[RMDB]
RNA sequence: GGGAACGACUCGAGUAGAGUCGAAAAGACGUGGCACCCACAAUGGUCGAAACGUGAUACCUCGCUUAAGGGAUGUGGGUGCCACGUCAGCGAAGAUUAAGUCAAAAGUGGUUUUGGAGGCCAAAACUGAAGCUGCAUAGUUCGCUAUGCAGCUUCAAAAAGAAACAACAACAACAAC
Reactivity to 2A3 in 0.01 (KOAc 150mM, MgCl2 10mM, bicine 150mM(pH8.5), 24C), signal-to-noise 2, nucleotides 027 to 126: g000a000c000g000u000g000g010c000a000c000c000c040a000c020a030a060u110g080g020u080c020g060a030a130a040c090g060u020g010a030u050a240c020c040u030c000g030c190u170u060a080a000g080g000g040a000u030g000u000g000g000g000u010g000c000c000a000c000g000u000c010a000g000c010g070a050a030g010a030u110u120a080a000g080u070c040a040a030a040a030g010u060g080g010u070u040u080u090g120g020a050g050g100c010c000a000a090a000a000c060
Reactivity to DMS in 0.01 (KOAc 150mM, MgCl2 10mM, bicine 150mM(pH8.5), 24C), signal-to-noise 2, nucleotides 027 to 126: g040a000c000g040u000g000g000c010a010c000c000c000a020c020a080a090u010g000g020u010c070g000a060a120a120c280g020u000g000a110u050a080c080c050u000c170g020c130u000u010a170a110g000g060g000a150u000g000u000g000g000g060u020g040c010c000a000c000g020u020c040a000g000c050g050a110a100g000a090u050u030a050a010g010u020c030a100a040a130a080g000u000g000g000u000u000u010u030g000g000a140g000g000c040c040a100a060a030a010c140
Description:
The record gives the reactivity of an RNA of 177 nucleotides to 2A3 and DMS. DMS adducts were read by reverse transcription with MarathonRT. Conditions: 150 mM KOAc, 10 mM MgCl2 and 150 mM bicine (pH 8.5), 24 C. The 2A3 profile rests on 1,096 reads.